Chemical mapping of a 170-nucleotide RNA with DMS and 2A3.
High DMS reactivity at an A or C suggests that its Watson-Crick edge is free.
It was measured as part of the RMDB library 15KLIB.
The reactions ran in a buffer of 150 mM KOAc, 10 mM MgCl2 and 150 mM bicine (pH 8.5), at 24 C.
RNA sequence: GGGAACGACUCGAGUAGAGUCGAAAACCGAGAAUUCCUUUGAUGUUCCCUAGCCAGGGAUUGUCUUCCUCAAGUUUCUUGAUUUUCUUCUUCGCCUUCCGGAGCUCCUUCUCGAGAUCCUCAGCUUACCGGGAAAGGUUCGCCUUUCCCAAAAGAAACAACAACAACAAC
Reactivity to DMS in 0.01 (KOAc 150mM, MgCl2 10mM, bicine 150mM(pH8.5), 24C), signal-to-noise 7, nucleotides 027 to 129: c050c040g040a120g000a210a060u030u030c000c000u060u080u000g060a050u000g000u040u020c020c010c030u040a150g040c090c060a120g010g010g000a060u020u020g020u030c020u000u000c020c000u070c080a130a120g030u020u000u010c020u000u030g000a100u040u010u000u040c040u000u000c050u020u000c060g000c080c050u020u020c030c040g000g000a160g000c090u000c030c060u010u000c000u020c040g030a090g010a100u030c000c000u020c070a080g010c080u010u030a050c120c090
Reactivity to 2A3 in 0.01 (KOAc 150mM, MgCl2 10mM, bicine 150mM(pH8.5), 24C), signal-to-noise 9, nucleotides 027 to 129: c010c010g010a020g010a020a080u110u100c030c000u130u070u180g060a060u090g050u030u030c010c000c010u030a040g070c050c070a020g010g000g010a040u010u110g030u010c010u050u030c020c020u080c050a100a090g030u020u060u020c020u030u080g060a140u080u040u040u030c010u050u010c000u030u040c020g020c020c000u050u040c020c000g010g010a030g010c010u040c010c000u040u040c020u010c010g050a060g010a050u020c000c020u050c010a050g030c040u070u090a100c050c050